RNA sequence: GGGAACGACUCGAGUAGAGUCGAAAACAUUGUUCUGAUCAUCUGAAGAUCAGCUCUUAGAAGAGAAAGAUCAGUUAAGUCCUUUGGACCUGAUCAGCUUGAUACAAGAACUACUGAUUUCAACUUCAAAACGGGUGCUACUUCGGUAGCACCCGAACCUGAAAUGUUACUUCGGUAACAUUUCAGGAAAAGAAACAACAACAACAAC
Reactivity to DMS in 0.01 (KOAc 150mM, MgCl2 10mM, bicine 150mM(pH8.5), 24C), signal-to-noise 1, nucleotides 027 to 156: c060a170u000u010g020u010u000c040u000g010a040u000c030a150u020c170u000g010a210a260g010a030u000c020a020g040c040u010c060u000u010a110g000a100a180g000a130g030a130a130a060g010a010u000c000a020g010u000u000a060a060g000u000c020c020u010u000u020g020g000a020c000c030u000g010a200u000c070a100g000c140u020u000g010a100u010a140c060a020a040g010a050a030c000u000a060c030u000g010a070u000u000u000c020a040a240c030u000u010c020a070a020a090a190c030g050g000g000u000g010c000u000a000c010u000u000c300g000g040u010a010g040c010a000c000c000c060g010a000a010
Reactivity to 2A3 in 0.01 (KOAc 150mM, MgCl2 10mM, bicine 150mM(pH8.5), 24C), signal-to-noise 4, nucleotides 027 to 156: c050a050u110u130g020u110u030c020u030g020a040u020c020a030u000c060u180g080a150a030g010a070u020c000a000g000c000u000c000u080u150a090g030a090a020g010a040g030a070a110a010g030a020u010c010a000g030u090u190a220a020g000u040c030c000u070u140u300g010g010a020c010c020u020g040a050u050c010a000g040c030u050u080g020a040u090a100c060a050a030g010a090a010c010u080a010c040u110g040a070u020u120u060c080a140a080c040u080u060c050a070a020a080a070c020g000g000g000u010g030c000u000a000c010u020u050c080g060g000u000a000g000c010a010c000c000c010g010a000a000